[RMDB]
RNA sequence: GGGAACGACUCGAGUAGAGUCGAAAACCGAGUGAGUUCGCUCACUCGGAAAGAAGUGUGCGCAUACUGCUGCGACAGUAGCGACAAGACCAGCAAGCAAAAAAACAAACCUGUUCGCAGGUUUGAACCACGAUGAUAGUUUCGACUAUCAUCGUGGAAAAGAAACAACAACAACAAC
Reactivity to DMS in 0.01 (KOAc 150mM, MgCl2 10mM, bicine 150mM(pH8.5), 24C), signal-to-noise 1, nucleotides 027 to 126: c000c000g000a030g010u000g000a010g000u000u000c160g020c000u010c000a000c000u000c020g000g000a000a050a100g010a100a100g000u000g020u000g000c050g000c010a160u010a050c010u000g040c050u000g030c150g000a140c030a010g050u000a020g010c030g010a050c040a060a140g000a170c030c030a100g000c120a070a120g010c070a000a000a080a110a060a010a120c000a000a000a000c030c000u000g010u000u010c190g060c000a000g000g000u000u000u000g000a030a100
Reactivity to 2A3 in 0.01 (KOAc 150mM, MgCl2 10mM, bicine 150mM(pH8.5), 24C), signal-to-noise 1, nucleotides 027 to 126: c000c000g000a010g010u000g000a020g000u040u220c220g000c100u020c010a000c000u000c010g000g020a020a070a000g030a050a020g100u090g010u100g260c010g000c020a230u000a030c010u000g050c020u160g170c040g000a010c000a020g000u000a010g000c010g010a010c030a010a030g080a040c030c010a000g030c060a070a100g000c090a020a040a040a000a050a030a110c010a000a010a000c000c010u000g000u050u080c240g000c080a000g000g000u000u000u000g000a000a010
An RNA of 177 nucleotides, treated with DMS and 2A3 and read out base by base. The data come from the RNA Mapping Database (RMDB), library M2PK50. For 2A3 the reverse transcriptase was SuperScript II with manganese. DMS (dimethyl sulfate) methylates the pairing face of unpaired adenines and cytosines. Values cover nucleotides 27 to 126. The 2A3 profile rests on 1,872 reads. The RNA was probed in 150 mM KOAc, 10 mM MgCl2 and 150 mM bicine (pH 8.5) at 24 C.